RNA sequence: GGGAACGACUCGAGUAGAGUCGAAAACAAGUUCGUGCUUGCGACUUACACGUAGGGCGAGGGGUGGGCGAAAGUUGCCAUGAGACCGUAACUUUCGUAGUCAUUGAUAAAGGGGCAGGUCUCCCUCAAAAGACGUUGGUCUUCGGACCAACGUCAAGAACCAUAUUUGGUUCGCCAAAUAUGGUUCAAAAGAAACAACAACAACAAC
Reactivity to DMS in 0.01 (KOAc 150mM, MgCl2 10mM, bicine 150mM(pH8.5), 24C), signal-to-noise 1, nucleotides 027 to 156: c040a170a110g030u020u000c150g000u000g000c030u010u000g030c030g000a260c090u000u020a050c020a110c060g040u000a100g020g010g000c030g040a040g020g010g000g040u010g000g010g030c020g080a030a020a020g010u000u000g010c000c020a120u000g010a050g050a020c000c030g030u010a060a070c020u000u010u010c000g010u070a110g000u010c070a180u000u000g000a110u010a070a090a150g000g010g010g030c040a050g030g010u000c020u000c000c090c030u000c110a050a050a090a110g020a020c020g050u010u000g020g000u010c000u010u000c290g040g000a000c000c000a000a000c000g000u000c000a000a100
Reactivity to 2A3 in 0.01 (KOAc 150mM, MgCl2 10mM, bicine 150mM(pH8.5), 24C), signal-to-noise 4, nucleotides 027 to 156: c030a020a020g020u100u090c040g010u110g070c030u090u140g020c020g070a070c080u080u160a040c120a010c070g080u100a100g000g020g030c090g060a090g020g000g020g090u260g000g010g000c010g000a000a000a000g010u020u010g000c050c070a150u110g060a010g000a040c010c020g020u010a000a000c000u000u000u000c030g010u000a010g050u030c050a090u060u230g020a030u120a070a090a040g020g010g020g000c070a020g010g030u000c010u030c030c000c000u120c010a110a120a000a020g000a000c000g000u000u010g010g000u010c000u050u030c210g040g000a000c000c000a010a010c000g000u000c000a000a000
Chemical mapping of a 207-nucleotide RNA with DMS and 2A3.
Reactivities are given for positions 27 through 156.
DMS adducts were read by reverse transcription with MarathonRT.
The 2A3 profile rests on 4,059 reads.
It was measured as part of the RMDB library M2RFPK.